[RMDB]
RNA sequence: GGGAACGACUCGAGUAGAGUCGAAAAACGAGGCCGUGCCUACUACGGUAGGCACCGCCUCGAAUUACGUUCAUCUACUUAAUCGUAGACGCAUCAAUACAUCAUUCAUGGAACGGGGGAUGGUGAAACUAGAAUCAAACGUUCGCGUUUGAUUCAACCCCCUAUACUUCUUCGGAAGUAUAGGGGGAAAAGAAACAACAACAACAAC
Reactivity to DMS in 0.01 (KOAc 150mM, MgCl2 10mM, bicine 150mM(pH8.5), 24C), signal-to-noise 2, nucleotides 027 to 156: a180c000g020a030g050g040c000c090g030u000g050c000c000u000a040c000u000a110c300g080g000u000a040g010g000c010a000c020c100g020c000c000u010c000g000a000a030u010u000a040c040g020u000u030c000a290u010c020u010a020c000u030u000a120a160u020c230g040u010a030g000a050c060g050c120a100u000c080a090a040u010a160c060a070u010c040a060u000u010c020a060u020g000g010a100a090c070g000g030g050g010g010a100u010g040g050u000g010a090a010a080c020u000a160g010a030a030u000c000a000a010a040c010g030u000u020c280g020c030g020u010u020u020g010a030u030u000c000a100a030
Reactivity to 2A3 in 0.01 (KOAc 150mM, MgCl2 10mM, bicine 150mM(pH8.5), 24C), signal-to-noise 4, nucleotides 027 to 156: a000c010g000a000g020g010c020c020g010u000g000c040c000u000a000c010u030a030c210g100g000u000a000g000g000c020a000c010c000g000c000c000u000c000g010a000a000u080u050a020c000g000u000u010c000a020u000c010u000a010c020u060u170a100a070u180c040g000u010a000g020a020c010g000c010a060u120c080a070a130u080a220c000a010u020c000a010u010u010c000a010u050g040g010a000a010c000g000g000g000g000g020a000u000g000g040u030g030a100a030a020c110u100a070g000a010a000u000c000a000a000a000c000g030u060u030c220g020c000g140u010u020u000g000a010u000u000c000a000a000
The record gives the reactivity of an RNA of 207 nucleotides to DMS and 2A3. It was measured as part of the RMDB library M2RFPK.